Conditions: 150 mM KOAc, 10 mM MgCl2 and 150 mM bicine (pH 8.5), 24 C. Chemical mapping of a 177-nucleotide RNA with DMS and 2A3. 2A3 adducts were read by reverse transcription with SuperScript II with manganese. For 2A3, 81,837 sequencing reads were counted.

RNA sequence: GGGAACGACUCGAGUAGAGUCGAAAAGCUAGCUAGUUGCGAGAGCACUCUCCGCGGUUUGGGAAGAGGUAUGGCUAGAAGUCUAGAGUACGUCACCUCUAUCCGCGGUUGACGCUUCUAGCCAUGCAUUCUGUAUAAGUUUCGACUUAUACAGAAUAAAAGAAACAACAACAACAAC
Reactivity to DMS in 0.01 (KOAc 150mM, MgCl2 10mM, bicine 150mM(pH8.5), 24C), signal-to-noise 9, nucleotides 027 to 126: g010c030u000a080g010c080u000a060g010u000u000g010c020g010a140g000a130g010c160a100c110u000c020u000c010c020g010c040g010g010u000u000u000g010g000g010a090a070g010a060g010g010u000a010u000g000g010c000u000a000g000a080a060g010u010c110u010a070g010a270g010u010a110c070g000u000c020a050c060c010u000c050u000a090u010c180c130g010c230g000g000u000u000g020a030c040g010c000u000u000c000u000a010g000c000c010a010u000g010c050
Reactivity to 2A3 in 0.01 (KOAc 150mM, MgCl2 10mM, bicine 150mM(pH8.5), 24C), signal-to-noise 9, nucleotides 027 to 126: g040c030u050a010g020c010u030a020g070u100u070g030c040g010a100g010a020g110c040a040c070u030c000u000c010c010g010c030g050g050u090u140u130g080g010g030a130a060g020a040g090g030u040a010u040g120g010c000u010a010g010a070a010g080u020c080u130a070g000a030g160u080a040c050g080u010c020a020c030c000u010c030u070a160u080c040c030g010c000g010g000u040u100g010a010c000g010c000u000u000c000u000a000g000c000c010a010u040g000c000